[RMDB]
RNA sequence: GGGAACGACUCGAGUAGAGUCGAAAAUAGGUUGAAUUCGUUCAACCUACAGGCAAGCAAGCAGCGCAACGAGACAAGGCGAUAAUAAGAUACCGCAUGCUGAUACAUCGGUCUUCGGACCGAUGAAUUGGAGUCUCAGGUUCGCCUGAGACUCCAAAAAAGAAACAACAACAACAAC
Reactivity to DMS in 0.01 (KOAc 150mM, MgCl2 10mM, bicine 150mM(pH8.5), 24C), signal-to-noise 1, nucleotides 027 to 126: u000a020g000g010u020u000g000a030a060u000u010c160g040u010u000c000a010a000c000c000u020a000c070a060g030g010c070a050a080g000c060a090a030g010c040a030g020c080g020c030a150a080c080g020a080g000a070c050a080a110g010g000c010g030a040u000a040a060u000a080a070g020a080u000a040c030c000g000c030a120u010g010c090u000g000a100u020a160c030a020u000c000g020g010u000c000u000u030c110g010g010a000c010c000g000a000u010g010a020a100
Description:
Conditions: 150 mM KOAc, 10 mM MgCl2 and 150 mM bicine (pH 8.5), 24 C. An RNA of 177 nucleotides, treated with DMS and read out base by base. Values cover nucleotides 27 to 126. For DMS, 715 sequencing reads were counted. It was measured as part of the RMDB library M2PK50.